An RNA of 177 nucleotides, treated with DMS and 2A3 and read out base by base. DMS adducts were read by reverse transcription with MarathonRT. Source: RMDB library OK2TST, as collected in RNAgym. The DMS profile rests on 11,220 reads.
RNA sequence: GGGAACGACUCGAGUAGAGUCGAAAACAAGAUGACGGCACUUACAAGGGCAUGAAUGACUACGUGGACUACCGGAAGGGGUUCCGAAGGGAGCACACCAUUGGCAAUGAGAAGGGGACCGGCCUGCUCUUAUAAAGGAGUUCGCUCCUUUAUAAGAAAAAGAAACAACAACAACAAC
Reactivity to DMS in 0.01 (KOAc 150mM, MgCl2 10mM, bicine 150mM(pH8.5), 24C), signal-to-noise 8, nucleotides 027 to 126: c090a090a110g010a080u010g010a090c090g010g010c040a050c070u000u010a080c120a080a100g010g000g020c040a050u010g010a100a090u000g010a100c060u000a080c090g010u000g010g010a050c050u000a090c050c030g000g030a100a110g000g010g010g000u010u000c020c020g010a100a090g010g000g000a050g020c070a060c060a080c040c040a070u000u000g010g010c070a060a100u010g000a070g010a090a070g000g010g000g010a070c070c060g010g010c020c030u000g000c090
Reactivity to 2A3 in 0.01 (KOAc 150mM, MgCl2 10mM, bicine 150mM(pH8.5), 24C), signal-to-noise 4, nucleotides 027 to 126: c030a020a040g050a070u110g030a030c030g020g030c020a000c070u070u110a050c070a100a080g010g000g000c020a020u080g060a110a040u110g030a050c030u040a020c140g060u110g020g010a020c030u180a260c060c000g010g030a030a060g070g000g000g010u060u000c010c000g020a030a020g080g000g010a020g020c020a010c000a010c040c030a040u050u110g040g000c020a030a080u130g020a060g010a130a040g000g010g020g000a010c000c030g030g000c010c010u030g020c000